[RMDB]
RNA sequence: GGGAACGACUCGAGUAGAGUCGAAAAUAAAUUAUAAAAGCUGAGAUGAGCUCAGCAAGGGUAUUUUUCGUUGGCGAAAGCCUCGUUCCCUAUCCCUUGCUCCGGAAACGGUAGCUUUUACACAUAAUAGAAAAAGGGAAUUCGUUCCCUUUUUCUAAAAAGAAACAACAACAACAAC
Reactivity to DMS in 0.01 (KOAc 150mM, MgCl2 10mM, bicine 150mM(pH8.5), 24C), signal-to-noise 1, nucleotides 027 to 126: u010a070a060a080u020u000a220u000a060a040a060a050g000c000u010g000a040g000a300u020g040a260g000c000u000c000a000g000c000a010a020g000g000g000u010a070u000u030u010u000u010c010g000u010u010g000g020c000g020a120a100a060g010c000c020u000c020g020u010u000c000c000c010u010a230u000c010c020c010u000u000g020c010u000c020c000g010g020a080a110a130c000g030g000u010a040g010c020u010u010u010u000a050c150a080c190a080u010a050a190

Description: Structure probing data (DMS) for a 177-nucleotide construct. It was measured as part of the RMDB library M2PK90. DMS adducts were read by reverse transcription with MarathonRT.